[RMDB]
RNA sequence: GGGAACGACUCGAGUAGAGUCGAAAAGGGUACAUUGAGACCAUGGUGUACCAUCACCACAACCUCGACCUGAUCAUAUUAACUGGGGAUCCUAUGCAGAGUGCCUACCAUGAAACUAACAGGGAUGGGUGAGGGGUGAUUUCGAUCACCCCUCACCAAAAGAAACAACAACAACAAC
Reactivity to 2A3 in 0.01 (KOAc 150mM, MgCl2 10mM, bicine 150mM(pH8.5), 24C), signal-to-noise 2, nucleotides 027 to 126: g020g000g040u080a050c060a070u170u170g060a080g040a290c120c000a050u200g030g000u050g000u050a050c000c000a060u080c070a000c040c000a010c000a060a000c000c010u000c030g020a000c000c020u090g030a050u050c010a050u000a130u290u090a170a060c030u050g000g000g000g020a030u000c000c040u040a080u110g160c000a000g070a050g120u080g030c000c020u040a090c000c000a120u050g120a100a070a000c020u100a080a030c170a060g020g020g090a020u090g110